The record gives the reactivity of an RNA of 177 nucleotides to 2A3 and DMS. The reactions ran in a buffer of 150 mM KOAc, 10 mM MgCl2 and 150 mM bicine (pH 8.5), at 24 C. For DMS, 1,195 sequencing reads were counted.
RNA sequence: GGGAACGACUCGAGUAGAGUCGAAAAACUAUAUGUGCUAUGUCCUGCUGGUUCUUAGGGGAUCCACAGAUAAAUAAAACAUAGUCCCCACCAUCCAAGAACUUUCUCCCAGAGAAAGAGGAGCUGGCUCCUUAGGGAGAUUCGUCUCCCUAAGGAGAAAAGAAACAACAACAACAAC
Reactivity to 2A3 in 0.01 (KOAc 150mM, MgCl2 10mM, bicine 150mM(pH8.5), 24C), signal-to-noise 2, nucleotides 027 to 126: a000c200u250a230u080a070u300g050u080g050c010u010a000u040g040u040c000c000u020g090c150u010g000g000u060u010c040u090u180a180g080g050g110g060a020u050c020c010a020c050a010g080a040u160a130a300a040u120a020a100a040a000c000a000u040a010g020u000c050c020c010c000a060c020c030a030u010c020c010a040a040g020a130a040c010u020u020u000c000u000c050c100c100a050g010a010g000a060a050a010g020a010g050g020a000g000c030u030g060g000
Reactivity to DMS in 0.01 (KOAc 150mM, MgCl2 10mM, bicine 150mM(pH8.5), 24C), signal-to-noise 2, nucleotides 027 to 126: a070c070u030a100u020a080u020g030u000g000c110u010a040u020g000u000c090c010u020g010c190u020g010g000u000u000c030u010u000a200g020g020g000g030a020u010c030c050a050c040a000g010a110u000a070a040a060u000a100a050a130a060c020a010u000a030g020u000c030c000c010c100a120c130c040a100u000c010c040a060a030g040a090a070c020u000u030u000c010u010c020c090c130a150g000a030g000a030a020a050g000a100g000g000a090g000c090u010g010g010